[RMDB]
RNA sequence: GGGAACGACUCGAGUAGAGUCGAAAAACCACCGGUAUUAACGGCGGUGACGAGUUACGGACAUGUCUUUUAAUGAAUAGAACUUGCGUCAAGCCCGACCUGGUCGAUAGCAAUGUUACCGUAUGCCAAAACGAUCCGUUAAUAGCAGAUCAGAGCGCUCAAGGGUCUUAUUCGUAAGACCCUUGAGAAAAGAAACAACAACAACAAC
Reactivity to 2A3 in 0.01 (KOAc 150mM, MgCl2 10mM, bicine 150mM(pH8.5), 24C), signal-to-noise 2, nucleotides 027 to 156: a000c050c000a030c020c000g020g020u050a010u030u020a030a000c000g000g000c010g030g000u000g010a030c090g040a090g040u010u010a020c010g000g020a020c020a110u030g100u100c060u060u300u050u170a220a220u230g100a120a080u100a130g050a160a050c020u020u040g030c050g020u000c040a060a100g050c030c020c010g080a130c020c050u090g040g000u020c030g000a090u100a040g000c000a070a070u100g010u080u090a050c000c000g010u000a010u220g070c010c030a000a010a030a050c050g010a080u010c010c000g000u000u000a000a000u010a030g050c070a020g000a060u130c020a040g000a000g110c000g020
Reactivity to DMS in 0.01 (KOAc 150mM, MgCl2 10mM, bicine 150mM(pH8.5), 24C), signal-to-noise 1, nucleotides 027 to 156: a060c000c040a070c000c020g060g060u010a110u010u010a020a030c070g020g030c000g050g000u000g020a040c000g000a300g050u000u000a060c020g000g000a070c000a070u010g030u000c020u000u010u020u000a080a120u010g000a120a190u010a050g020a060a060c020u040u020g020c100g000u000c020a030a140g000c040c020c030g010a050c040c050u000g080g020u000c010g140a110u000a050g010c020a050a090u000g060u020u020a040c010c010g000u000a110u010g040c050c040a060a030a110a090c070g020a090u010c020c010g010u010u000a020a080u000a130g030c000a040g010a070u040c040a060g000a170g000c120g000
An RNA of 207 nucleotides, treated with 2A3 and DMS and read out base by base. DMS adducts were read by reverse transcription with MarathonRT. It was measured as part of the RMDB library OK3TST. High DMS reactivity at an A or C suggests that its Watson-Crick edge is free. The RNA was probed in 150 mM KOAc, 10 mM MgCl2 and 150 mM bicine (pH 8.5) at 24 C. The 2A3 profile rests on 1,005 reads.